[RMDB]
RNA sequence: GGGAACGACUCGAGUAGAGUCGAAAACGAUCCAGACUCAUGUAGAUAGUACCUAGGGAUCUGCUCUAGCUAGGUACAGCUAGAUGUCAUGGAGUAGUACUACCAUGGCUAGGACAUGUACCAUGACACGACCAGAGGUUUUCGAACCUCUGGUCGUAAAAGAAACAACAACAACAAC
Reactivity to DMS in 0.01 (KOAc 150mM, MgCl2 10mM, bicine 150mM(pH8.5), 24C), signal-to-noise 2, nucleotides 027 to 126: c050g000a120u000c000c000a220g000a090c170u030c050a070u010g040u030a030g000a190u000a080g000u000a040c030c000u000a040g010g000g000a090u000c010u000g000c040u000c020u000a110g000c040u000a030g000g030u000a060c030a170g010c100u000a010g000a060u000g010u000c050a040u000g010g020a090g000u000a140g000u030a300c040u000a040c000c030a030u010g010g010c020u000a070g020g000a070c160a050u000g010u000a110c100c020a070u060g010a110c160
Reactivity to 2A3 in 0.01 (KOAc 150mM, MgCl2 10mM, bicine 150mM(pH8.5), 24C), signal-to-noise 1, nucleotides 027 to 126: c050g000a000u000c020c000a030g050a020c020u020c090a040u120g010u140a040g040a230u080a110g100u060a170c020c030u040a070g040g010g000a050u010c030u070g050c010u040c000u020a010g000c000u020a070g040g000u040a020c020a020g030c000u030a010g000a100u110g040u050c000a010u000g000g000a000g040u100a000g110u010a100c020u060a220c000c010a040u010g000g020c010u050a070g050g050a000c040a030u130g020u030a020c000c020a010u100g050a020c040
Notes: Chemical mapping of a 177-nucleotide RNA with DMS and 2A3. DMS adducts were read by reverse transcription with MarathonRT. The reactions ran in a buffer of 150 mM KOAc, 10 mM MgCl2 and 150 mM bicine (pH 8.5), at 24 C. Values are in units of 0.01, from 0 to 300, in steps of 10. For 2A3, 1,234 sequencing reads were counted. For DMS, 993 sequencing reads were counted. It was measured as part of the RMDB library OK2TRN.